[RMDB]
The data come from the RNA Mapping Database (RMDB), library M2RFPK. This 207-nucleotide RNA was probed chemically with 2A3. Reactivities are given for positions 27 through 156. The 2A3 profile rests on 520 reads. Reactivities are rounded to 0.1 and cut off at 0 and 3. 2A3 adducts were read by reverse transcription with SuperScript II with manganese.
RNA sequence: GGGAACGACUCGAGUAGAGUCGAAAAAGGUUCGCUGUGGGGCAACUCUUAUUAGUAACUAAUCCAAAGCAAGUAUAGGAGAACAGGUUUUUAACUAUUUUUAGGCAGAUAAAAAAUAGUAUUUGACAAAAUCGAUUGUCGUUCGCGACAAUCGAAACCAUUAGUGGUGCUUCGGCACCACUAAUGGAAAAGAAACAACAACAACAAC
Reactivity to 2A3 in 0.01 (KOAc 150mM, MgCl2 10mM, bicine 150mM(pH8.5), 24C), signal-to-noise 1, nucleotides 027 to 156: a000g020g000u000u030c010g000c000u020g040u020g050g030g010g000c020a080a000c020u000c040u110u130a210u080u100a140g050u060a090a080c110u030a170a150u110c080c010a200a070a040g020c020a060a050g030u020a080u090a060g000g010a000g040a080a060c070a000g070g000u010u060u040u000u000a050a000c000u000a000u010u000u000u000u000a000g050g040c040a000g010a090u130a120a020a000a000a000a000u020a010g040u020a120u090u130u170g060a020c050a030a090a000a120u010c000g000a010u000u000g000u000c040g030u020u070c190g030c010g080a020c020a000a000u010c000g000a010a010a000